An RNA of 177 nucleotides, treated with 2A3 and DMS and read out base by base. For DMS the reverse transcriptase was MarathonRT. The reactions ran in a buffer of 150 mM KOAc, 10 mM MgCl2 and 150 mM bicine (pH 8.5), at 24 C. 2A3 adducts were read by reverse transcription with SuperScript II with manganese. The data come from the RNA Mapping Database (RMDB), libraries RFM100 and RFMREP.
RNA sequence: GGGAACGACUCGAGUAGAGUCGAAAAGGAAAGAAUGUUCCAUGACCGUAAAUACAGGCACCCCACAGUGCUUGCUAUCGCGGCAAUAUCGCCAGUGGUGCUGUCGUGAUGCGGUCUUCGCAUGGACAACUUCAUCUUAGUUCGCUAAGAUGAAGUUAAAAGAAACAACAACAACAAC
Reactivity to 2A3 in 0.01 (KOAc 150mM, MgCl2 10mM, bicine 150mM(pH8.5), 24C), signal-to-noise 9, nucleotides 027 to 126: g120g040a100a060a030g100a070a080u140g040u140u020c010c010a010u040g010a010c000c000g010u030a110a150a030u130a050c010a010g010g000c000a010c010c020c030c010a070c040a040g020u020g020c000u020u020g000c020u040a030u090c040g010c030g020g000c000a010a010u070a050u110c040g080c150c110a150g060u180g170g010u040g010c030u000g010u010c010g010u010g000a010u030g000c000g000g000u010c000u020u110c010g010c010a020u030g000g010a010c010
Reactivity to DMS in 0.01 (KOAc 150mM, MgCl2 10mM, bicine 150mM(pH8.5), 24C), signal-to-noise 9, nucleotides 027 to 126: g010g010a090a070a080g010a090a070u020g010u020u000c010c010a040u000g000a040c000c000g020u000a050a090a080u040a210c010a020g000g000c000a010c010c070c050c220a110c200a130g010u000g010c030u000u000g010c050u000a030u010c070g010c060g000g000c010a010a030u010a030u010c040g010c130c170a170g020u030g000g010u000g010c080u000g010u000c020g010u000g000a040u000g000c000g000g000u000c060u010u020c120g020c150a050u010g000g000a050c100